[RMDB]
RNA sequence: GGGAACGACUCGAGUAGAGUCGAAAAGAACCGAUUCGUCGGUUCAAAAAAGCGUACUACGUAGAGCACGUGUAGCAACAGCGCUUCCCAAAUAGGAAGCGACAUGCUACGCGUGAACUACUCUACGUAUCGCAAAAAACUUGGUUUCGACCAAGAAGGUUAUUGAUAGUUUCGACUAUCAAUAACCAAAAGAAACAACAACAACAAC
Reactivity to DMS in 0.01 (KOAc 150mM, MgCl2 10mM, bicine 150mM(pH8.5), 24C), signal-to-noise 2, nucleotides 027 to 156: g030a020a000c020c000g000a070u000u000c300g030u000c000g020g040u000u000c000a010a020a040a130a070a130g020c060g050u000a070c090u010a020c000g040u000a010g000a020g020c000a060c000g030u000g010u000a010g020c010a020a080c090a220g020c000g020c000u000u010c000c000c020a060a190a220u000a020g010g010a020a000g030c000g000a040c100a300u000g000c000u000a020c030g010c000g080u000g000a050a060c040u000a230c020u000c010u000a010c010g030u010a030u010c010g000c010a010a080a100a080a080a100c000u010u000g010g010u000u000u010c220g000a060c010c030a010a010g000a080a110